[RMDB]
Conditions: 150 mM KOAc, 10 mM MgCl2 and 150 mM bicine (pH 8.5), 24 C. Chemical mapping of a 207-nucleotide RNA with DMS and 2A3. For DMS, 14,352 sequencing reads were counted. It was measured as part of the RMDB library OK3TST. 2A3 adducts were read by reverse transcription with SuperScript II with manganese. Reactivities are given for positions 27 through 156.
RNA sequence: GGGAACGACUCGAGUAGAGUCGAAAAGGGAAUUCUCUCUGUCUCUCAGAUGAUACAGCAAAGGCGUACGGGGGUCAGACAAUUUGUCUUCUGCCACUUGGAGCUGGAUCAGGGCCAAGUCUAAUUCUGAGCUGCAGAGUGUGGUAUCGUCAUACUAAAAAUUUACCAUAUUCGUAUGGUAAAUUUUAAAAGAAACAACAACAACAAC
Reactivity to DMS in 0.01 (KOAc 150mM, MgCl2 10mM, bicine 150mM(pH8.5), 24C), signal-to-noise 5, nucleotides 027 to 156: g010g020g010a100a100u000u010c030u000c010u010c010u010g020u000c090u000c020u000c020a120g010a100u000g010a140u010a050c050a040g010c040a100a130a090g000g010c030g030u010a070c090g020g010g020g020g020u000c080a070g000a080c080a090a160u010u010u000g020u000c020u000u000c030u000g020c020c050a050c030u010u010g010g000a200g010c020u000g010g020a110u000c060a100g010g020g010c030c060a060a130g010u000c040u000a060a130u010u000c020u010g000a060g000c050u000g010c020a070g000a070g020u010g030u000g010g010u000a060u000c040g000u010c030a100u010a090c060u000a050
Reactivity to 2A3 in 0.01 (KOAc 150mM, MgCl2 10mM, bicine 150mM(pH8.5), 24C), signal-to-noise 6, nucleotides 027 to 156: g080g000g040a050a100u160u050c040u010c000u000c010u040g050u070c020u000c000u000c040a010g000a050u070g010a020u100a100c060a030g040c030a050a080a050g050g000c040g040u100a060c060g040g000g000g010g030u070c020a000g020a040c040a100a150u080u110u230g030u000c000u070u020c030u040g020c010c010a100c050u010u070g050g010a040g040c030u020g020g050a050u100c070a080g000g100g000c020c020a050a010g010u010c030u070a030a060u070u000c010u010g010a010g000c060u010g000c020a010g010a030g020u030g010u030g020g030u050a060u070c030g050u030c040a040u050a110c070u150a030